Record summary: An RNA of 177 nucleotides, treated with DMS and 2A3 and read out base by base. The DMS profile rests on 150,079 reads.
[RMDB]
RNA sequence: GGGAACGACUCGAGUAGAGUCGAAAACCUGCGUAUUUGUGGAGACACAAAGAGCAGGGUGAACGCUGUGCGUAGGUGUUAUCCCUACGGUGUUAGACAGUGGUUCUCUGACAGCCUGAAGGGAUGACCGCGGUACUAGCUUCGGCUGGUGUCGCGGAAAAGAAACAACAACAACAAC
Reactivity to DMS in 0.01 (KOAc 150mM, MgCl2 10mM, bicine 150mM(pH8.5), 24C), signal-to-noise 9, nucleotides 027 to 126: c000c000u000g000c000g010u060a100u000u000u000g020u000g000g000a240g000a270c010a000c000a000a010a010g000a290g010c000a010g000g000g000u010g000a090a090c040g010c000u000g010u010g000c040g010u000a050g010g010u010g010u020u020a090u010c100c000c000u000a120c150g000g010u010g010u010u030a070g000a030c090a090g010u020g010g000u010u010c060u000c010u010g000a060c080a060g010c020c000u000g020a150a090g000g000g000a040u010g000a190
Reactivity to 2A3 in 0.01 (KOAc 150mM, MgCl2 10mM, bicine 150mM(pH8.5), 24C), signal-to-noise 9, nucleotides 027 to 126: c000c000u000g000c010g020u240a050u010u010u000g000u000g000g020a050g010a040c000a000c000a010a010a000g010a010g000c000a000g010g000g020u050g090a050a010c020g000c040u050g030u160g090c030g030u030a040g010g040u060g100u260u150a070u080c010c000c000u000a010c030g020g020u060g050u090u060a050g010a020c030a040g030u070g110g090u190u030c030u000c000u030g050a040c020a060g210c020c000u070g060a110a100g050g010g010a020u040g040a030